Source: RMDB library OK1LIB, as collected in RNAgym.
The record gives the reactivity of an RNA of 177 nucleotides to 2A3.
Values are in units of 0.01, from 0 to 300, in steps of 10.
[RMDB]
RNA sequence: GGGAACGACUCGAGUAGAGUCGAAAACGCGCUUACGAGCGCGAAACUGGGCCUCCAUUUUAGGAUUCCAGCUGAAUGCUAACCUUGCAAGCAGUCCUUUCUAAGGACAGCAGCCUCAGGCCUGUAAGGACUCGUCGACCUUCGGGUCGACGAGUCCAAAAGAAACAACAACAACAAC
Reactivity to 2A3 in 0.01 (KOAc 150mM, MgCl2 10mM, bicine 150mM(pH8.5), 24C), signal-to-noise 1, nucleotides 027 to 126: c000g120c010g010c000u010u020a050c170g070a000g000c000g020c000g000a000a000a000c050u020g010g010g010c000c000u040c050c060a170u060u040u000u300a160g040g000a070u170u000c100c020a070g000c030u020g000a100a160u100g000c040u050a140a090c010c000u050u040g040c170a190a120g000c000a000g000u000c000c000u050u120u070c220u110a090a000g020g000a000c000a000g030c040a000g060c020c030u160c020a070g010g000c000c000u050g000u050a010a010